An RNA of 177 nucleotides, treated with DMS and 2A3 and read out base by base.

[RMDB]
RNA sequence: GGGAACGACUCGAGUAGAGUCGAAAAUGUGGCAUAAAAGAUGUUGUUCUACAAGGCUUAAAAGCUUGUUGUUACGUGGGUGUGCAAACUGUUGAAGAUCUGCGUGCUCGCAUGACAUAUGUAUGCCGAUAUCAAAGCGGUUCGCCGCUUUGAUAUCAAAAGAAACAACAACAACAAC
Reactivity to DMS in 0.01 (KOAc 150mM, MgCl2 10mM, bicine 150mM(pH8.5), 24C), signal-to-noise 2, nucleotides 027 to 126: u020g030u020g000g020c000a020u000a020a070a100a110g010a060u000g010u000u000g010u010u010c040u000a030c040a060a040g030g010c030u020u000a040a090a090a300g000c020u000u000g000u000u000g010u000u010a030c120g010u010g010g030g040u010g010u010g000c030a020a010a050c040u010g000u010u040g020a130a020g010a070u000c150u030g000c010g020u000g010c030u000c010g000c020a160u000g020a010c000a040u010a090u010g000u000a010u000g020c000c010
Reactivity to 2A3 in 0.01 (KOAc 150mM, MgCl2 10mM, bicine 150mM(pH8.5), 24C), signal-to-noise 1, nucleotides 027 to 126: u120g020u050g030g000c010a000u020a030a140a020a090g100a100u090g000u080u010g030u030u000c000u000a010c000a070a020g120g000c030u130u180a070a030a000a030g040c020u030u000g010u010u000g000u030u030a010c040g000u030g000g010g000u010g000u000g020c000a000a100a000c010u060g100u210u190g140a020a000g010a110u000c020u020g000c000g020u000g010c020u000c020g000c020a030u160g000a000c000a010u070a020u110g050u020a010u040g020c040c010

2A3 is a SHAPE reagent: it acylates the 2'-hydroxyl of flexible nucleotides of all four kinds.